[RMDB]
RNA sequence: GGGAACGACUCGAGUAGAGUCGAAAAGAAAGCCUGGUCUUUUGGAGCUGAUGACUCAGGAAACCAUGCAAUUGAGGCAAGCCUUGGGCUGCUUUAGAGGCGCUGACAUCCGAGGAGUCUUCUGGAAUCAGUGUAUUUAUUUCGAUAAAUACACUGAAAAAGAAACAACAACAACAAC
Reactivity to DMS in 0.01 (KOAc 150mM, MgCl2 10mM, bicine 150mM(pH8.5), 24C), signal-to-noise 9, nucleotides 027 to 126: g010a090a100a160g010c010c020u000g000g010u010c030u000u000u000u020g010g010a090g010c030u000g010a100u020g000a110c020u010c020a100g000g010a050a070a090c110c030a050u010g010c030a070a130u020u010g010a040g000g000c020a050a070g010c010c010u020u020g020g010g020c020u000g010c030u000u010u010a060g000a120g000g000c070g010c060u000g000a090c130a080u000c030c020g010a100g000g000a090g010u000c040u000u000c010u010g000g010a140a130
Reactivity to 2A3 in 0.01 (KOAc 150mM, MgCl2 10mM, bicine 150mM(pH8.5), 24C), signal-to-noise 9, nucleotides 027 to 126: g050a020a040a000g040c020c040u060g020g030u050c050u030u130u050u130g080g020a050g020c060u040g050a080u090g030a080c010u010c070a010g040g000a050a030a030c030c000a020u100g000c010a040a180u090u100g020a040g030g000c050a070a080g020c010c010u120u120g060g050g000c010u020g010c000u060u020u050a110g020a050g050g020c030g000c070u030g020a040c010a050u010c010c010g030a060g070g030a030g030u000c000u040u020c030u060g040g060a070a100

Notes:
Source: RMDB libraries RFM100 and RFMREP, as collected in RNAgym. An RNA of 177 nucleotides, treated with DMS and 2A3 and read out base by base. As a SHAPE reagent, 2A3 marks flexible, mostly unpaired nucleotides at the ribose 2'-OH.